[RMDB]
RNA sequence: GGGAACGACUCGAGUAGAGUCGAAAAGAUAUGGAUCACACGAGCGAAGAUCGAUAGGGAGAUGUGGAUCGGAAACGAUCCAAACAUCGAGGAUCUAUACGAUCUUCGCUCGUGUGAUCCUAAGUCACCGUUAUACUAUCUUCGGAUAGUAUAACGGAAAAGAAACAACAACAACAAC
Reactivity to DMS in 0.01 (KOAc 150mM, MgCl2 10mM, bicine 150mM(pH8.5), 24C), signal-to-noise 2, nucleotides 027 to 126: g030a080u010a300u000g000g000a000u010c000a020c010a010c020g010a020g030c000g020a020a020g020a020u010c000g030a060u000a010g000g000g030a020g020a030u000g070u000g000g000a010u000c000g000g000a130a120a230c010g000a010u000c000c010a010a080a130c000a000u000c000g010a090g010g010a020u020c000u000a020u000a160c000g000a020u000c000u010u010c010g020c000u030c000g020u000g000u010g000a000u010c000c000u010a000a060g010u000c020a240